Overview: An RNA of 177 nucleotides, treated with 2A3 and DMS and read out base by base. For 2A3, 869 sequencing reads were counted. The reactions ran in a buffer of 150 mM KOAc, 10 mM MgCl2 and 150 mM bicine (pH 8.5), at 24 C. For DMS the reverse transcriptase was MarathonRT. 2A3 adducts were read by reverse transcription with SuperScript II with manganese. For DMS, 974 sequencing reads were counted.
RNA sequence: GGGAACGACUCGAGUAGAGUCGAAAAUUGGCGAAUGCCUGUGGAUCUACAUUUGUUGCGGGUUCGAGACCCGUCAGAGCCCGGCUCUGUAGCUCAAUGGUAGAGCGGUGUAUUCACAUAAACUUGUUAUGCCCCCAGAAUUCGUUCUGGGGGCAUAAAAAGAAACAACAACAACAAC
Reactivity to 2A3 in 0.01 (KOAc 150mM, MgCl2 10mM, bicine 150mM(pH8.5), 24C), signal-to-noise 2, nucleotides 027 to 126: u060u070g010g020c090g120a250a070u300g010c020c030u000g010u030g000g000a030u000c060u120a000c010a070u020u030u150g060u060u040g020c000g000g000g000u000u000c010g000a000g010a070c000c000c000g000u000c000a000g000a000g010c110c300c200g060g000c000u030c000u000g010u000a060g020c000u000c010a010a040u240g270g000u020a040g000a000g010c000g000g000u000g000u020a000u030u000c010a030c030a010u080a070a170a110c060u040u060g010u030
Reactivity to DMS in 0.01 (KOAc 150mM, MgCl2 10mM, bicine 150mM(pH8.5), 24C), signal-to-noise 1, nucleotides 027 to 126: u070u000g000g000c010g030a160a010u200g100c060c000u000g000u030g010g110a040u070c190u000a000c000a000u000u030u020g010u080u000g000c000g000g000g010u000u000c040g000a300g010a010c000c000c000g000u000c000a000g070a000g030c000c100c090g000g140c030u010c040u020g010u000a000g090c000u000c000a000a010u010g000g120u000a000g000a070g020c000g000g000u000g000u000a010u000u000c030a000c050a020u120a000a140a080c060u000u000g020u000